[RMDB]
RNA sequence: GGGAACGACUCGAGUAGAGUCGAAAAAUUAUGAACUUCAGAUACUAUCACCUUUUCCCUUUGGGGGUUUCAGCCAGUGACAGAAAUCGUGAAUGGACCACAUAUGUGUAUAAACACACACACACACAACCAUACACAUAUACUCUUUGUGGGUAACUAGUGUUCGUACUUUCGAGUACGAACACUAAAAAGAAACAACAACAACAAC
Reactivity to 2A3 in 0.01 (KOAc 150mM, MgCl2 10mM, bicine 150mM(pH8.5), 24C), signal-to-noise 2, nucleotides 027 to 156: a000u300u270a130u140g070a100a030c030u020u060c160a010g010a040u070a090c000u030a080u120c020a120c000c060u060u030u110u100c040c020c000u060u030u060g060g010g040g000g010u020u060u130c020a010g020c020c030a020g020u000g050a030c020a020g070a040a100a090u050c060g060u050g090a060a080u070g020g060a060c000c010a020c000a070u000a050u050g050u010g040u030a060u100a060a220a010c060a010c010a000c000a000c000a000c010a000c120a000c030a000a070c090c020a020u030a010c000a010c000a010u020a010u040a180c050u050c060u060u070u130g060u050g020g010g000u030a000a040c040